[RMDB]
RNA sequence: GGGAACGACUCGAGUAGAGUCGAAAAGAGGAAGUGCUCCUUCCUGUUAUGCUGCCUCUGCAAGCCCAAGCCCGCUGUGAGCCUGGAAGUCCCUUGCAAGCCCAGUACUUUUGUCCUCUCAUGCGUCGUCCACAUGCUAGUUCGCUAGCAUGUGGACAAAAGAAACAACAACAACAAC
Reactivity to DMS in 0.01 (KOAc 150mM, MgCl2 10mM, bicine 150mM(pH8.5), 24C), signal-to-noise 2, nucleotides 027 to 126: g010a070g000g020a040a030g020u010g000c200u000c030c030u000u020c000c020u000g000u000u000a050u000g010c030u000g000c090c060u000c050u000g020c090a030a060g030c130c000c040a070a100g010c040c030c050g020c130u000g000u010g020a110g000c030c020u010g000g000a070a110g010u000c040c090c000u010u010g020c060a050a130g020c040c050c030a050g020u020a070c030u010u010u000u010g000u000c030c000u010c030u000c060a100u020g000c120g010u000c080
Reactivity to 2A3 in 0.01 (KOAc 150mM, MgCl2 10mM, bicine 150mM(pH8.5), 24C), signal-to-noise 1, nucleotides 027 to 126: g090a020g030g050a120a050g070u070g150c020u000c000c000u050u000c010c020u050g140u120u100a140u160g000c010u020g000c000c000u030c010u020g000c020a040a070g040c010c010c000a020a060g040c020c000c000g040c040u050g030u080g110a040g020c010c010u010g020g000a060a020g030u070c000c000c060u000u030g050c040a090a030g030c020c010c000a020g060u050a100c040u070u080u020u090g020u030c000c020u040c030u000c010a060u130g000c000g000u000c010